[RMDB]
RNA sequence: GGGAACGACUCGAGUAGAGUCGAAAAUAAUCAAGAUGAAUCGUUUUUAGUUUGCUUGCUUACCUUAUGGGCCAGGAUGAGAUCAACUUGAAUCUUUUUAUGUAGGCAGAUAGCGACGGAAUUUAAACAUGGUAUUAAUGUUCGCAUUAAUACCAUGAAAAGAAACAACAACAACAAC
Reactivity to 2A3 in 0.01 (KOAc 150mM, MgCl2 10mM, bicine 150mM(pH8.5), 24C), signal-to-noise 9, nucleotides 027 to 126: u190a000a060u110c080a040a040g050a090u170g080a070a100u090c060g050u000u010u030u040u090a090g020u020u030u110g020c010u010u020g000c000u030u050a080c000c000u100u080a100u170g050g020g020c030c020a020g030g030a050u100g020a020g010a060u060c040a030a140c060u040u050g030a050a040u030c000u020u120u030u000u010a100u150g020u010a010g020g000c000a010g010a110u080a010g010c000g010a010c010g040g070a070a080u110u140u130a110a050a010
Reactivity to DMS in 0.01 (KOAc 150mM, MgCl2 10mM, bicine 150mM(pH8.5), 24C), signal-to-noise 8, nucleotides 027 to 126: u050a080a080u030c080a060a060g010a100u020g010a080a090u020c040g010u010u010u020u020u020a100g010u010u010u010g020c020u000u010g000c030u000u010a050c020c050u010u020a080u020g000g010g010c100c050a050g010g010a060u010g000a090g010a050u010c050a090a080c160u010u010g010a060a070u010c010u000u010u010u030u020a030u020g010u010a030g010g020c050a020g000a040u010a050g010c100g010a010c040g010g010a080a080u020u020u020a050a070a210